[RMDB]
RNA sequence: GGGAACGACUCGAGUAGAGUCGAAAAAAAAAGAUAUGGACCUACCGAACGAAGAACUAGCUCCCCACCAGAGAUCGGAAACGAUCUCUGAGGCUAGGGAGUUCCGGGUAGGUCCUAAGUCAAAAAAUCAAUAAGAGGGGUUCGCCCCUCUUAUUGAAAAAGAAACAACAACAACAAC
Reactivity to DMS in 0.01 (KOAc 150mM, MgCl2 10mM, bicine 150mM(pH8.5), 24C), signal-to-noise 1, nucleotides 027 to 126: a050a000a050a020a150g000a010u000a300u000g000g000a010c000c020u000a020c000c010g000a040a000c050g040a100a110g000a120a210c020u000a000g060c110u010c100c160c010c030a300c040c000a020g000a040g020a020u000c000g000g000a050a010a100c000g010a000u000c000u010c000u000g000a000g050g000c000u020a010g010g000g000a080g020u000u000c010c190g000g000g000u000a000g040g000u000c000c000u000a000a050g000u000c060a000a030a040a060a080a130
The data come from the RNA Mapping Database (RMDB), library TTRDES. This 177-nucleotide RNA was probed chemically with DMS. The reactions ran in a buffer of 150 mM KOAc, 10 mM MgCl2 and 150 mM bicine (pH 8.5), at 24 C. Values cover nucleotides 27 to 126. DMS adducts were read by reverse transcription with MarathonRT.